[RMDB]
RNA sequence: GGGAACGACUCGAGUAGAGUCGAAAAAGAGACAAUGUGAGAAAGUUGGCCAGGCUGAGAAAGUCCACUUGGACUCAGGCGGGGUCCAAGCCUUGGCCUCAGCUUCCUUCUCUGUCUGGGCGUGGCACCAACGCCGUAAUUUCGAUUACGGCGUUGGAAAAGAAACAACAACAACAAC
Reactivity to DMS in 0.01 (KOAc 150mM, MgCl2 10mM, bicine 150mM(pH8.5), 24C), signal-to-noise 2, nucleotides 027 to 126: a110g020a110g010a040c040a050a050u000g000u010g010a080g000a060a040a050g010u000u000g010g010c060c130a040g000g010c000u000g000a070g000a090a100a080g010u010c090c110a180c140u020u010g000g010a020c000u000c070a040g030g020c130g040g000g010g000u010c000c040a040a030g000c090c050u000u000g010g010c070c000u000c040a000g000c000u000u000c040c020u000u000c040u010c030u000g020u000c010u000g010g000g000c060g000u000g000g000c090a170
An RNA of 177 nucleotides, treated with DMS and read out base by base. It was measured as part of the RMDB library OK2TRN. Reactivities are rounded to 0.1 and cut off at 0 and 3.